[RMDB]
RNA sequence: GGGAACGACUCGAGUAGAGUCGAAAAGCGCAAGCGGUCUGGGAUGGGGCCCACAGCCUACGUCCGGCGAAGGGAUGCUGUGCGGCGCUCGCGCGAUACACCAAAGCCUGGUCUCUGUCGCUGCCGCCAUACCUGCCCGUUUCGACGGGCAGGUAUGAAAAGAAACAACAACAACAAC
Reactivity to DMS in 0.01 (KOAc 150mM, MgCl2 10mM, bicine 150mM(pH8.5), 24C), signal-to-noise 2, nucleotides 027 to 126: g050c020g000c040a090a120g000c040g000g000u020c090u010g040g000g000a080u000g010g000g000g000c010c020c100a110c090a100g010c010c120u000a080c120g030u010c010c050g040g020c110g000a140a150g000g000g010a060u010g030c040u010g000u000g020c090g020g010c000g000c090u000c120g010c050g010c010g010a090u000a090c120a170c010c050a090a100a170g020c150c060u000g020g000u000c010u000c020u000g000u010c010g010c010u000g010c050c030g050c020
Reactivity to 2A3 in 0.01 (KOAc 150mM, MgCl2 10mM, bicine 150mM(pH8.5), 24C), signal-to-noise 2, nucleotides 027 to 126: g020c030g000c090a120a020g020c020g020g040u050c130u130g080g020g060a090u070g010g020g050g010c010c000c000a050c000a010g020c030c040u140a190c080g060u040c020c000g020g020c090g130a060a070g060g000g030a030u080g060c020u030g050u040g060c040g030g030c080g070c010u140c070g050c000g000c000g020a000u010a040c060a020c010c000a040a070a000g060c010c030u040g020g000u050c100u010c020u080g040u030c000g040c050u040g020c000c000g010c020

Notes
This 177-nucleotide RNA was probed chemically with DMS and 2A3. It was measured as part of the RMDB library OK2TST. For DMS the reverse transcriptase was MarathonRT. For 2A3 the reverse transcriptase was SuperScript II with manganese. For 2A3, 1,567 sequencing reads were counted. The reactions ran in a buffer of 150 mM KOAc, 10 mM MgCl2 and 150 mM bicine (pH 8.5), at 24 C.